RNA sequence: GGGAACGACUCGAGUAGAGUCGAAAAGGGAUGGGGUGAUUGAAGAGAUCCGGGGGGAGUUGUAAUUCCUGUCUGCCUGUUUCAAGGGAGGGGUAUAUUAUUUGGCCCCUCCCAGCUCAUUAACUCACAUCUCUAUGGGAUUCGUCCCAUAGAGAUGAAAAGAAACAACAACAACAAC
Reactivity to DMS in 0.01 (KOAc 150mM, MgCl2 10mM, bicine 150mM(pH8.5), 24C), signal-to-noise 2, nucleotides 027 to 126: g000g010g020a150u010g000g000g020g040u020g020a100u010u000g000a090a130g000a180g010a070u010c050c080g010g010g000g010g000g010a050g020u000u000g010u010a070a130u000u000c010c030u010g010u000c080u010g010c050c040u020g000u000u010u010c110a100a140g030g000g020a010g010g010g000g020u000a020u000a070u010u000a220u000u010u000g010g000c000c000c000c000u000c000c000c000a030g020c090u010c040a060u000u020a030a090c140u010c110a190